This 207-nucleotide RNA was probed chemically with 2A3.
[RMDB]
RNA sequence: GGGAACGACUCGAGUAGAGUCGAAAAUGGCUUCUCCUGGGCAAUCGCUCGCUGUUUUUGUGGCUGGCUUUCAGCGGGCUGGAGGAGCCGGGAGCGGAGGCGGAGGACCGAGCCAAAAACGUCAGCCUAUAGAGGAAGCUGUUCGCAGCUUCCUCAAUCCAUUAGACUCUUUCGAGAGUCUAAUGGAAAAAGAAACAACAACAACAAC
Reactivity to 2A3 in 0.01 (KOAc 150mM, MgCl2 10mM, bicine 150mM(pH8.5), 24C), signal-to-noise 2, nucleotides 027 to 156: u070g000g000c000u020u000c000u030c010c010u110g100g070g000c090a070a190u170c220g000c010u040c000g000c020u030g010u040u040u000u040u030g110u110g020g000c010u010g010g000c030u000u050u030c000a010g000c010g000g010g000c030u030g000g040a000g000g000a000g010c000c010g000g000g000a060g000c080g030g060a040g030g020c040g040g020a040g040g030a040c050c060g030a010g010c070c030a050a030a000a000a000c030g010u010c000a010g000c000c020u090a080u100a050g000a000g000g000a000a000g000c000u020g010u040u120c250g020c120a000g000c010u010u010c000c000u010c000a000a000
For 2A3, 1,129 sequencing reads were counted.
The reactions ran in a buffer of 150 mM KOAc, 10 mM MgCl2 and 150 mM bicine (pH 8.5), at 24 C.